[RMDB]
RNA sequence: GGGAACGACUCGAGUAGAGUCGAAAACGGUGAACCCUCUGGGCUUGGGUCUCCUCCCAGGUCCGGAAUCAGUCUCCAUGGCUUCCAUCCUGGGCCUCUUCUUCGGGGGCCCUCCCUCUUCGUUCCUAGCGGGCGUGGUUCGCCACGCCCAAAAGAAACAACAACAACAAC
Reactivity to DMS in 0.01 (KOAc 150mM, MgCl2 10mM, bicine 150mM(pH8.5), 24C), signal-to-noise 3, nucleotides 027 to 129: c090g020g140u230g040a010a060c000c080c110u010c000u010g020g000g060c070u040u000g030g050g000u080c220u030c190c060u040c020c000c000a000g060g070u040c000c000g000g020a040a020u060c290a030g090u010c000u020c000c150a000u020g000g000c090u010u040c080c040a050u070c000c140u040g000g040g020c040c000u010c050u030u040c120u100u100c000g000g000g040g000g050c000c000c000u020c000c000c040u040c040u050u120c040g050u000u000c020c040u040a030g010c090
Reactivity to 2A3 in 0.01 (KOAc 150mM, MgCl2 10mM, bicine 150mM(pH8.5), 24C), signal-to-noise 3, nucleotides 027 to 129: c070g030g000u000g030a020a010c010c010c020u020c010u010g000g000g020c000u020u050g030g000g030u090c080u070c050c020u110c010c000c000a010g030g020u020c010c000g000g010a000a040u090c050a010g020u010c010u020c070c030a070u110g040g000c020u100u000c060c010a070u060c000c050u020g000g000g000c020c010u010c020u160u070c040u100u170c090g000g000g030g010g000c000c000c000u000c010c000c000u000c030u020u020c010g010u010u020c000c020u040a050g050c080

Structure probing data (DMS and 2A3) for a 170-nucleotide construct. It was measured as part of the RMDB library 15KLIB. For 2A3 the reverse transcriptase was SuperScript II with manganese. The reactions ran in a buffer of 150 mM KOAc, 10 mM MgCl2 and 150 mM bicine (pH 8.5), at 24 C.